[RMDB]
RNA sequence: GGGAACGACUCGAGUAGAGUCGAAAAUGGAUCUUCCAAAGGCCAGCUUAACAGAGCACCUAAAAACUUUACUUUUGUUUGAUUUUGACAAGUUCUUGUUUCUUCCAGAAGCGGAAUUUCAGGCACAAAUGAGAUUGCAUUCUUGCAAAGGAAGAUACUAGGAUGCUAAUUUCGAUUAGCAUCCUAGAAAAGAAACAACAACAACAAC
Reactivity to DMS in 0.01 (KOAc 150mM, MgCl2 10mM, bicine 150mM(pH8.5), 24C), signal-to-noise 1, nucleotides 027 to 156: u030g000g010a020u020c020u000u000c000c020a070a190a050g000g060c030c010a090g010c010u000u010a040a090c290a250g000a110g040c040a100c060c000u020a050a070a030a050a000c040u000u000u000a110c060u000u000u000u000g000u060u000u000g020a200u020u000u010u010g020a090c030a060a190g050u000u000c070u000u040g040u000u000u000c000u000u000c060c120a080g000a180a070g000c060g020g000a040a060u010u000u000c050a070g050g000c040a140c080a050a040a080u000g000a110g000a040u020u000g030c060a200u020u000c020u020u000g010c100a060a130a140g000g020a020a040g000a080u000a160
Reactivity to 2A3 in 0.01 (KOAc 150mM, MgCl2 10mM, bicine 150mM(pH8.5), 24C), signal-to-noise 3, nucleotides 027 to 156: u110g040g010a090u010c010u040u050c040c000a090a080a000g020g010c030c070a020g000c050u070u040a120a020c030a070g090a050g020c010a110c030c020u150a110a110a100a130a050c060u210u230u090a100c060u090u170u180u080g090u140u070u110g060a130u070u120u150u140g070a080c030a110a080g020u000u030c000u020u000g030u030u080u000c000u030u000c000c000a000g000a130a020g000c000g040g000a000a000u020u130u190c030a060g080g000c060a030c020a060a140a070u200g010a060g020a100u060u050g000c010a010u060u000c000u070u300g010c000a010a060a010g010g000a000a010g010a000u010a030